[RMDB]
The record gives the reactivity of an RNA of 177 nucleotides to DMS. For DMS, 2,058 sequencing reads were counted. The reactions ran in a buffer of 150 mM KOAc, 10 mM MgCl2 and 150 mM bicine (pH 8.5), at 24 C. For DMS the reverse transcriptase was MarathonRT.
RNA sequence: GGGAACGACUCGAGUAGAGUCGAAAAGAUAUGGACGGGUGGGAGACGUGCUCGGAAACGAGCAUACGUCAUCGAUCACCGUCCUAAGUCAAAGUAGAUCCGAGUGGUUCGCCACUCGGAUCUACAACUUAAAGCAACUCUUCGGAGUUGCUUUAAGAAAAGAAACAACAACAACAAC
Reactivity to DMS in 0.01 (KOAc 150mM, MgCl2 10mM, bicine 150mM(pH8.5), 24C), signal-to-noise 2, nucleotides 027 to 126: g000a050u010a300u000g020g000a000c000g010g000g000u000g000g010g000a050g020a010c000g020u010g000c000u000c000g000g010a070a100a210c020g020a020g030c000a030u000a030c050g010u000c010a170u000c080g000a150u020c030a090c010c000g010u010c010c000u010a020a110g000u000c040a050a130a120g000u000a000g010a010u000c000c010g000a000g030u000g000g010u000u000c190g010c000c000a010c020u000c020g000g000a010u000c000u030a000c000a040a120